RNA sequence: GGGAACGACUCGAGUAGAGUCGAAAAUGGCCCGGCGUCAAUCGUGUUUUCUGACGGAAAAUAUAUCGGCGCCAUGUUGGACAGAAACGGGCUGCGUCCAAGUCGCUACUACAUCACCCAUGAUGACGCCCCCUCUAAGAUUCGUCUUAGAGGGGGCAAAAGAAACAACAACAACAAC
Reactivity to DMS in 0.01 (KOAc 150mM, MgCl2 10mM, bicine 150mM(pH8.5), 24C), signal-to-noise 1, nucleotides 027 to 126: u020g000g020c000c020c010g080g010c000g040u000c000a030a040u020c150g060u020g010u000u000u000u000c020u010g000a210c300g010g000a000a000a000a000u000a020u000a020u000c130g000g000c020g010c010c020a040u000g010u020u000g000g020a080c040a110g000a030a100a070c070g000g000g010c020u000g020c040g000u000c020c030a050a040g010u000c050g000c080u020a060c090u000a110c020a050u010c030a060c010c020c030a090u010g020a080u000g000a110c170
Chemical mapping of a 177-nucleotide RNA with DMS.
The DMS profile rests on 908 reads.
The data come from the RNA Mapping Database (RMDB), library OK2TST.
Values are in units of 0.01, from 0 to 300, in steps of 10.
Conditions: 150 mM KOAc, 10 mM MgCl2 and 150 mM bicine (pH 8.5), 24 C.